[RMDB]
RNA sequence: GGGAACGACUCGAGUAGAGUCGAAAAUAAGUGAGUACUUCACCUUUCUGACAGUCUGCAGAAUGGGGGAGCCACACACCCACCUUGCUAGGUGGUAGUGGCAUUACAUGAUACGGGAUGUAAGAGCCUGGCUCAUUGUUAUCCAUUGGAUGACAUAAUUUUAGGGUCAGUUCGCUGACCCUAAAAUAAAAGAAACAACAACAACAAC
Reactivity to 2A3 in 0.01 (KOAc 150mM, MgCl2 10mM, bicine 150mM(pH8.5), 24C), signal-to-noise 2, nucleotides 027 to 156: u110a050a000g050u030g010a020g030u070a100c050u050u030c020a140c010c020u000u040u020c050u030g160a270c020a120g140u020c070u120g040c000a000g000a100a000u090g000g020g000g020g000a020g010c000c000a030c000a020c000a000c000c010c000a000c000c030u020u300g090c140u220a000g040g000u010g000g070u030a030g030u010g020g020c000a000u020u070a020c030a030u040g040a010u060a110c080g000g030g040a010u050g070u070a100a070g010a050g120c000c050u050g060g000c010u020c060a060u060u030g010u000u010a020u020c020c030a150u080u300g000g000a010u010g000a000c010a000u160a120
Reactivity to DMS in 0.01 (KOAc 150mM, MgCl2 10mM, bicine 150mM(pH8.5), 24C), signal-to-noise 1, nucleotides 027 to 156: u000a130a080g020u010g010a100g030u000a050c090u010u000c030a100c050c030u000u010u000c010u050g000a140c040a290g000u010c040u000g000c020a010g000a040a070u000g010g010g060g000g020a090g000c050c020a160c000a100c030a260c130c000c000a030c050c020u000u000g020c070u010a140g000g020u000g000g020u000a010g040u010g030g000c050a080u000u000a020c030a010u000g060a100u010a160c170g000g060g030a110u000g000u000a100a100g000a220g050c140c040u010g000g000c000u000c080a060u000u010g010u010u000a030u000c000c030a300u000u000g000g010a070u000g000a040c030a110u000a030